Annotation:
An RNA of 207 nucleotides, treated with 2A3 and DMS and read out base by base. For DMS the reverse transcriptase was MarathonRT. DMS (dimethyl sulfate) methylates the pairing face of unpaired adenines and cytosines.
[RMDB]
RNA sequence: GGGAACGACUCGAGUAGAGUCGAAAAGUAUAAAAUCUGCAAGUAGUGCUAUUGUUGGAAUCACCGUACCUAUUUAGGUUUACGCUCCAAGAUCGGUGGAUUGCAGCCCUAUCAAUAUCUAGGAGAAAAAACCCAGGACUGUUCGCAGUCCUGGGAACACUCGUAAAUUCUUCGGAAUUUACGAGUGAAAAGAAACAACAACAACAAC
Reactivity to 2A3 in 0.01 (KOAc 150mM, MgCl2 10mM, bicine 150mM(pH8.5), 24C), signal-to-noise 2, nucleotides 027 to 156: g050u030a020u060a240a130a030a080u050c020u020g000c010a050a050g060u080a020g080u110g110c040u070a060u110u140g090u060u080g020g020a060a080u060c020a020c030c020g020u050a020c000c010u070a150u250u190u280a010g000g000u010u080u030a020c030g000c010u020c000c000a020a030g000a020u050c040g010g000u010g020g070a060u040u030g020c000a010g020c020c000c000u100a150u110c060a120a070u020a040u170c030u080a050g000g040a020g000a090a060a020a010a050a030c010c000c000a000g000g000a000c010u000g030u080u080c190g000c080a000g000u000c000c000u000g000g010g000a000a000
Reactivity to DMS in 0.01 (KOAc 150mM, MgCl2 10mM, bicine 150mM(pH8.5), 24C), signal-to-noise 1, nucleotides 027 to 156: g020u000a110u000a080a100a100a130u000c030u000g010c010a080a150g040u000a140g050u010g050c010u010a040u000u000g010u000u010g010g010a080a070u010c020a020c010c050g010u000a070c000c030u000a140u010u000u000a040g030g010u000u010u000a040c090g010c020u000c020c050a090a090g000a020u000c060g000g010u000g000g010a140u010u030g010c000a110g010c010c020c010u020a240u000c040a070a120u010a060u010c060u000a130g000g010a080g010a020a090a060a040a180a190c010c010c050a030g000g000a040c000u040g030u000u010c260g080c000a000g010u000c010c010u000g030g000g000a000a030